[RMDB]
RNA sequence: GGGAACGACUCGAGUAGAGUCGAAAAACUUACUUCAGGGUAUAAUGUACGCAUAAUAUCAUGUGCAUUAUAAGUGUCUGUAUUUUUAGUUGCAUUUAAUAAUGCUGCCAUACUAAAUCCUGCACACAGCAUACGUGGAAUUCGUUCCACGUAUGCUAAAAGAAACAACAACAACAAC
Reactivity to 2A3 in 0.01 (KOAc 150mM, MgCl2 10mM, bicine 150mM(pH8.5), 24C), signal-to-noise 2, nucleotides 027 to 126: a000c030u060u050a000c000u050u110c020a030g010g000g020u030a010u000a000a000u000g020u030a040c030g050c130a080u150a220a080u130a220u190c050a090u190g010u010g000c000a000u000u050a010u010a020a070g070u070g020u000c030u060g090u060a120u050u030u010u010u070a020g020u040u050g000c000a020u040u030u150a300a180u240a090a010u040g000c000u000g040c130c030a100u130a160c010u050a000a000a100u050c010c020u030g040c100a010c000a000c000
Reactivity to DMS in 0.01 (KOAc 150mM, MgCl2 10mM, bicine 150mM(pH8.5), 24C), signal-to-noise 2, nucleotides 027 to 126: a040c060u000u000a060c000u000u000c040a050g000g000g050u000a010u000a020a010u000g010u010a040c040g030c270a090u010a090a100u010a190u030c190a060u000g020u000g000c000a000u000u000a010u010a010a080g010u000g010u010c020u020g020u010a060u000u000u000u010u000a010g000u000u000g000c020a010u000u000u010a070a100u020a040a000u000g010c020u000g000c100c130a110u000a060c080u000a010a030a020u000c040c000u000g000c160a030c170a050c160
The record gives the reactivity of an RNA of 177 nucleotides to 2A3 and DMS.
The reactions ran in a buffer of 150 mM KOAc, 10 mM MgCl2 and 150 mM bicine (pH 8.5), at 24 C.
In probing experiments dimethyl sulfate is read out at A N1 and C N3, which are open when not base-paired.